[RMDB]
RNA sequence: GGGAACGACUCGAGUAGAGUCGAAAAUCGCUUUGUGAACGACGGGCGGCGGGCCGUGCGUGAUACGUGGACUGGCGACGCCGCGCCCGAUAUUACGACGCUUGUCGUGGGCGACGAUGGCACGGGUCUGUCGCGUUCAAACACCGCGCUCCGUAACAAAUAAGCCUGUAUUCGUACAGGCUUAUUUAAAAGAAACAACAACAACAAC
Reactivity to DMS in 0.01 (KOAc 150mM, MgCl2 10mM, bicine 150mM(pH8.5), 24C), signal-to-noise 3, nucleotides 027 to 156: u000c030g010c010u000u020u000g020u000g010a100a050c030g010a080c040g000g010g020c010g000g020c050g000g020g000c060c070g040u000g020c060g020u010g010a100u000a050c030g020u010g000g000a110c060u000g020g030c020g010a080c030g000c020c020g000c050g000c000c030c030g000a120u010a090u010u010a100c010g010a080c020g040c100u010u020g040u000c010g020u000g010g020g030c020g010a070c020g000a100u000g010g030c000a100c030g020g020g020u000c020u000g010u000c040g020c030g000u010u020c030a100a090a120c050a120c060c020g000c000g010c000u000c020c020g020u010a060a160c170
Reactivity to 2A3 in 0.01 (KOAc 150mM, MgCl2 10mM, bicine 150mM(pH8.5), 24C), signal-to-noise 4, nucleotides 027 to 156: u070c000g020c060u080u100u250g070u100g070a140a050c070g120a010c010g020g050g020c010g030g010c010g000g000g000c050c030g020u060g010c080g010u090g090a090u050a200c040g010u070g080g040a090c070u090g040g050c020g040a060c040g010c000c000g000c000g020c000c000c000g010a010u010a080u210u080a070c050g010a010c010g100c280u150u250g000u010c030g000u110g010g010g030c030g010a190c090g080a130u120g050g000c060a020c080g080g060g050u050c040u050g050u050c020g000c020g010u050u050c030a040a030a000c040a000c050c000g030c000g030c020u060c040c030g010u060a100a030c060